[RMDB]
RNA sequence: GGGAACGACUCGAGUAGAGUCGAAAAAUAAAUAACGCGAAGAAGCAGACAAAGGACUGCAAGAACGCGAAAACACCAACGUCAAGAACAGCAGGAAGGAGCUGAAAAAGACGAAACACCAAAAAAACAUUAGACUAUUGUUCGCAAUAGUCUAAUGAAAAGAAACAACAACAACAAC
Reactivity to 2A3 in 0.01 (KOAc 150mM, MgCl2 10mM, bicine 150mM(pH8.5), 24C), signal-to-noise 2, nucleotides 027 to 126: a000u090a000a050a010u110a080a060c020g020c010g030a280a040g050a070a010g010c010a000g020a020c050a060a300a030g120g060a050c000u010g000c020a050a030g020a020a000c010g000c010g050a100a020a020a000c090a010c020c010a030a030c020g000u000c010a040a030g050a180a100c010a010g020c010a000g000g150a140a060g070g090a080g000c010u000g090a030a080a000a000a000g000a010c000g030a050a040a000c090a060c060c040a100a070a020a000a000a000a000
Reactivity to DMS in 0.01 (KOAc 150mM, MgCl2 10mM, bicine 150mM(pH8.5), 24C), signal-to-noise 2, nucleotides 027 to 126: a020u020a070a100a040u000a140a170c020g030c010g000a020a070g020a130a220g010c010a000g020a100c060a100a210a160g010g060a080c000u000g010c010a050a170g010a070a090c000g030c020g000a090a080a100a090c180a120c060c020a060a140c010g020u000c040a060a170g010a140a140c020a000g010c050a070g030g000a090a050g000g000a080g010c000u000g010a000a080a050a130a060g000a010c000g000a100a040a050c190a160c120c080a020a000a020a060a060a060a190